[RMDB]
Overview:
An RNA of 177 nucleotides, treated with 2A3 and DMS and read out base by base.
RNA sequence: GGGAACGACUCGAGUAGAGUCGAAAAAUUAUUGGCUCAGUAGCGCAGAGCGCUGAAAUUAAGUGGAACGGGAAAUGCAGCUCUGACAUCAGCAGCCAUUUCUCAUAAACGGAAAUCGGAGAGGAGGACGUGAGUGGAUAUUCGUAUCCACUCACGUAAAAGAAACAACAACAACAAC
Reactivity to 2A3 in 0.01 (KOAc 150mM, MgCl2 10mM, bicine 150mM(pH8.5), 24C), signal-to-noise 4, nucleotides 027 to 126: a000u240u170a090u070u120g040g030c030u000c080a030g020u130a070g030c040g020c030a030g010a010g040c040g000c000u000g010a090a090a090u130u080a130a030g070u030g100g010a030a150c090g080g000g010a000a040a010u060g000c050a030g000c000u000c010u010g080a120c050a130u250c020a040g050c030a000g010c000c000a000u000u020u000c000u000c000a010u060a010a070a010c050g040g000a030a030a060u110c040g000g020a070g050a040g100g030a050g030g010
Reactivity to DMS in 0.01 (KOAc 150mM, MgCl2 10mM, bicine 150mM(pH8.5), 24C), signal-to-noise 4, nucleotides 027 to 126: a030u040u020a040u030u020g000g010c010u000c010a070g020u040a050g020c080g000c020a090g010a120g000c000g010c020u000g010a120a070a060u020u010a090a150g000u020g020g000a080a200c200g000g000g000a020a050a020u000g000c080a150g000c010u020c010u000g000a130c210a150u060c040a040g010c150a040g010c040c010a020u000u000u000c010u010c000a050u020a070a120a060c080g040g000a070a090a040u000c020g000g010a050g000a040g010g020a090g000g000
Overview
The 2A3 profile rests on 2,945 reads. The DMS profile rests on 5,444 reads.